[RMDB]
RNA sequence: GGGAACGACUCGAGUAGAGUCGAAAACAACUACUUAAAAGCCAUAUAUACCUAUCUGCACAUUCUCUGUCAACAGAUAUACCGAAUUGCAUUGGUUGUGAUGAAGGUGCAAAUGAUAUUGAUAUAACAUUUAGUAGGGUUUCGACCCUACUAAAUGAAAAGAAACAACAACAACAAC
Reactivity to 2A3 in 0.01 (KOAc 150mM, MgCl2 10mM, bicine 150mM(pH8.5), 24C), signal-to-noise 5, nucleotides 027 to 126: c020a010a030c010u140a020c020u140u120a060a110a030a060g050c020c030a020u050a000u010a000u030a190c010c010u040a060u030c020u060g020c020a010c010a040u040u020c040u000c010u060g080u080c020a060a080c010a100g080a040u050a020u050a160c020c030g070a080a070u120u110g000c040a030u020u100g090g020u050u030g030u020g030a070u090g010a000a030g000g000u010g020c000a050a070a110u100g030a020u040a050u090u120g030a020u070a020u080a210a030
Reactivity to DMS in 0.01 (KOAc 150mM, MgCl2 10mM, bicine 150mM(pH8.5), 24C), signal-to-noise 6, nucleotides 027 to 126: c120a110a140c070u010a060c080u010u000a070a100a110a150g010c110c090a060u000a080u000a050u000a060c010c030u000a030u000c020u000g010c020a030c010a050u000u000c030u010c060u000g000u010c120a060a080c090a060g010a090u010a040u010a070c070c060g010a060a080u000u010g020c140a210u000u010g000g000u000u000g000u000g000a070u000g000a030a040g010g020u000g000c020a030a040a050u010g000a040u000a040u000u010g000a100u010a040u000a070a170